The data come from the RNA Mapping Database (RMDB), library RNAMAK. This 207-nucleotide RNA was probed chemically with DMS and 2A3. The DMS profile rests on 2,147 reads. For 2A3, 1,030 sequencing reads were counted. As a SHAPE reagent, 2A3 marks flexible, mostly unpaired nucleotides at the ribose 2'-OH. Conditions: 150 mM KOAc, 10 mM MgCl2 and 150 mM bicine (pH 8.5), 24 C.
RNA sequence: GGGAACGACUCGAGUAGAGUCGAAAAAUAGGUUCGCCUAUGCGCUCGCGUACUACACAGCGGGGUAGAGGCAACAGCGAACUACUAGGUCCCAAAUAGGACCUAGCGACAUGCCUGCGAAUACGCUGUGUAUCGCAUAUAAUGGUUUCGACCAUAAAAGUUGUCUUUCAUUCGUGAAAGACAACUUAAAAGAAACAACAACAACAAC
Reactivity to DMS in 0.01 (KOAc 150mM, MgCl2 10mM, bicine 150mM(pH8.5), 24C), signal-to-noise 1, nucleotides 027 to 156: a130u000a070g040g000u000u010c130g040c020c010u000a070u010g020c090g020c010u000c050g000c060g000u000a120c040u000a030c000a040c040a030g030c060g060g020g050g000u000a100g010a130g010g010c010a060a040c030a110g050c100g000a080a130c000u010a020c010u000a010g020g030u010c000c010c010a080a180a230u000a080g000g000a000c000c000u000a000g010c050g060a110c090a210u000g010c000c000u000g000c010g000a120a120u040a060c000g040c000u010g020u000g020u000a010u000c030g020c060a080u000a040u000a040a040u000g000g010u000u000u000c120g000a020c010c010a030u000a030a120
Reactivity to 2A3 in 0.01 (KOAc 150mM, MgCl2 10mM, bicine 150mM(pH8.5), 24C), signal-to-noise 2, nucleotides 027 to 156: a010u030a050g000g020u030u060c230g000c010c000u030a030u040g160c270g040c030u050c100g000c020g030u070a110c010u010a000c040a000c010a010g000c000g000g000g000g000u040a020g010a000g030g000c030a020a010c050a070g030c010g040a070a060c030u070a020c000u000a300g030g000u060c000c020c000a190a240a120u280a060g000g000a000c000c000u000a000g000c000g040a030c070a140u060g010c020c010u200g220c010g060a040a000u040a010c000g000c030u020g020u000g010u030a030u070c000g080c010a020u050a020u080a220a120u100g000g000u050u000u240c110g050a030c000c060a000u180a060a300